The record gives the reactivity of an RNA of 207 nucleotides to 2A3. The reactions ran in a buffer of 150 mM KOAc, 10 mM MgCl2 and 150 mM bicine (pH 8.5), at 24 C. High 2A3 reactivity points to a flexible backbone, as in loops and unpaired stretches. It was measured as part of the RMDB library M2RFPK. The 2A3 profile rests on 890 reads. Reactivities are rounded to 0.1 and cut off at 0 and 3. Values cover nucleotides 27 to 156. 2A3 adducts were read by reverse transcription with SuperScript II with manganese.
RNA sequence: GGGAACGACUCGAGUAGAGUCGAAAACAUAGCGUUUCAAAAUGUGCGCCAUUAACAUUGUUUAUGCAAGCACGUUUCGCAAUGUACGGCGCAGAAACAUUGCCAACACAAAUACGCUUCACGAUGUAAAACAUCGGUGCGUUCGCGCACCGAUGAACUCUUGAUCGGUGUUCGCACCGAUCAAGAGAAAAGAAACAACAACAACAAC
Reactivity to 2A3 in 0.01 (KOAc 150mM, MgCl2 10mM, bicine 150mM(pH8.5), 24C), signal-to-noise 2, nucleotides 027 to 156: c030a040u130a030g010c030g030u020u160u130c130a110a060a050a090u130g070u010g020c000g010c020c000a000u060u150a070a000c010a040u010u070g060u010u060u030a040u070g060c070a100a160g080c080a040c130g050u060u080u080c030g000c000a000a000u010g010u010a030c080g010g000c070g000c000a000g030a000a010a000c030a040u040u130g020c030c080a100a020c110a070c010a050a050a000u190a030c040g000c000u060u060c100a060c120g140a150u130g050u300a040a010a050a100c000a000u000c000g000g030u000g020c000g000u020u060c180g000c000g000c040a000c000c000g000a000u000g000a000a000